[RMDB]
RNA sequence: GGGAACGACUCGAGUAGAGUCGAAAAGAUAUGGACCGUUGAAUACGUACUUAGCUUUUGACGCUCGUAGGGUCGGAAACGACCUGAAGAGCGAUAAGCUAAGUACGUAUUCACCGGUCCUAAGUCACCGUGCAAAUAACUUCGGUUAUUUGCACGGAAAAGAAACAACAACAACAAC
Reactivity to DMS in 0.01 (KOAc 150mM, MgCl2 10mM, bicine 150mM(pH8.5), 24C), signal-to-noise 1, nucleotides 027 to 126: g000a030u000a300u000g000g030a000c000c000g010u000u010g000a040a020u000a000c000g010u000a000c000u000u000a010g000c020u020u000u000u010g000a230c080g060c000u000c000g020u010a300g020g000g040u000c000g050g010a080a080a190c010g010a010c000c000u010g010a150a300g000a010g000c010g000a040u010a010a000g000c010u000a020a020g010u000a000c000g020u010a000u000u000c000a000c010c000g000g010u000c000c010u000a020a040g010u010c080a260
The record gives the reactivity of an RNA of 177 nucleotides to DMS.
The RNA was probed in 150 mM KOAc, 10 mM MgCl2 and 150 mM bicine (pH 8.5) at 24 C.
For DMS, 866 sequencing reads were counted.